[RMDB]
RNA sequence: GGGAACGACUCGAGUAGAGUCGAAAACUGAAAUAUACAUGAUGUUAGUCAUUAUUUGCCCCUCUAAGUUCUGAGCUAAUCCUGUAUUGAUGUUAACAGUGAUAGUGGCUUAUUGUCUCCAUUUCACAAGACUUCCUUUCAGAAGUGAUUGAAAGGCACUCCCUUCACAUUUCGAUGUGAAGGGAGUAAAAGAAACAACAACAACAAC
Reactivity to DMS in 0.01 (KOAc 150mM, MgCl2 10mM, bicine 150mM(pH8.5), 24C), signal-to-noise 2, nucleotides 027 to 156: c040u000g000a060a070a100u000a120u000a090c100a040u010g030a060u010g010u010u000a100g010u000c030a070u000u010a110u000u000u020g010c040c000c010c010u010c060u000a050a130g010u000u000c050u000g010a120g030c020u000a100a170u000c030c030u000g020u010a110u000u010g020a090u010g010u010u000a090a070c060a090g030u000g040a090u000a060g040u000g070g000c040u000u000a060u000u000g000u000c010u000c040c030a150u000u010u010c050a070c070a060a100g010a090c040u010u000c000c000u010u010u010c020a060g020a100a110g020u000g010a070u000u000g020a010a000a050g000g030c170
Reactivity to 2A3 in 0.01 (KOAc 150mM, MgCl2 10mM, bicine 150mM(pH8.5), 24C), signal-to-noise 3, nucleotides 027 to 156: c050u020g050a020a040a060u170a020u050a060c080a080u050g030a040u090g070u240u150a080g070u080c030a030u090u140a110u140u270u300g100c000c000c000c000u000c010u020a040a010g020u090u020c010u020g070a020g010c010u020a040a030u030c000c010u000g040u010a060u100u080g160a170u120g050u210u060a060a050c030a030g000u000g130a010u000a030g060u060g000g000c010u020u050a050u010u160g060u000c040u000c030c000a080u030u100u040c090a050c000a040a040g050a080c000u080u070c010c000u040u060u010c030a040g030a240a050g140u080g110a080u070u080g000a030a020a000g020g010c040
The record gives the reactivity of an RNA of 207 nucleotides to DMS and 2A3. The RNA was probed in 150 mM KOAc, 10 mM MgCl2 and 150 mM bicine (pH 8.5) at 24 C. DMS adducts were read by reverse transcription with MarathonRT. 2A3 is a SHAPE reagent: it acylates the 2'-hydroxyl of flexible nucleotides of all four kinds. For 2A3, 1,416 sequencing reads were counted.